[RMDB]
RNA sequence: GGGAACGACUCGAGUAGAGUCGAAAACAACAUCCAAACAUCUCAAGUUCCCAAACCCCCGGAAGUUGCCCGCACAGCGUCCAUCUUGGAACCGUCUCGAUCCAAGGCACGCCAAACCUCUGGAACCAUGCUACAAAUACUUCGGUAUUUGUAGCAUAAAAGAAACAACAACAACAAC
Reactivity to 2A3 in 0.01 (KOAc 150mM, MgCl2 10mM, bicine 150mM(pH8.5), 24C), signal-to-noise 6, nucleotides 027 to 126: c030a020a010c010a060u080c020c040a060a080a050c070a140u070c040u020c090a070a060g010u010u020c000c000c000a030a050a070c020c010c010c000c000g030g010a040a020g050u090u070g040c010c020c000g020c010a030c010a030g020c020g030u010c030c000a050u040c030u020u050g030g020a040a040c040c010g070u010c020u030c090g040a040u010c010c010a010a020g020g000c030a010c050g020c000c020a040a060a060c010c010u040c030u030g030g010a020a000c030c010
Reactivity to DMS in 0.01 (KOAc 150mM, MgCl2 10mM, bicine 150mM(pH8.5), 24C), signal-to-noise 4, nucleotides 027 to 126: c060a060a130c080a060u010c020c020a080a110a100c110a080u010c050u010c060a080a130g010u000u000c010c010c000a060a080a300c030c000c000c020c020g000g010a050a060g010u000u000g010c020c020c040g000c060a070c060a070g000c070g000u020c040c030a060u000c020u000u010g000g000a030a070c100c050g000u020c020u000c020g010a070u000c030c000a050a050g010g020c080a020c040g000c020c020a030a090a080c040c000u000c020u010g000g000a070a110c090c050